[RMDB]
RNA sequence: GGGAACGACUCGAGUAGAGUCGAAAAGAGCUUUUGUCCGGAAUGGUUCCGCCGUGAUCGGGCCAUGCAAUAGUUGCCAACGACAACUAUUCUCCGGUUGCUCAGGCAGCGUAACGCUGCUUGAAAGAUGACGGCAAUCGCUUCGGCGAUUGCCGAACUUCCGUGUAGUGUUCGCACUACACGGAAGAAAAGAAACAACAACAACAAC
Reactivity to 2A3 in 0.01 (KOAc 150mM, MgCl2 10mM, bicine 150mM(pH8.5), 24C), signal-to-noise 1, nucleotides 027 to 156: g040a020g000c040u130u060u220u150g140u070c000c020g000g050a000a000u010g010g000u230u300c030c050g000c090c190g200u220g050a160u100c000g000g000g000c020c000a010u010g090c040a000a000u000a000g000u000u000g010c030c040a170a020c120g120a140c020a010a000c100u000a000u050u030c020u040c060c010g000g040u070u030g040c010u000c030a020g000g020c000a020g040c030g130u180a120a040c140g000c000u000g000c000u000u040g010a020a020a020g100a030u170g080a020c000g000g000c020a000a000u000c000g010c010u070u060c220g070g010c000g000a000u000u010g000c010c000g030a010a000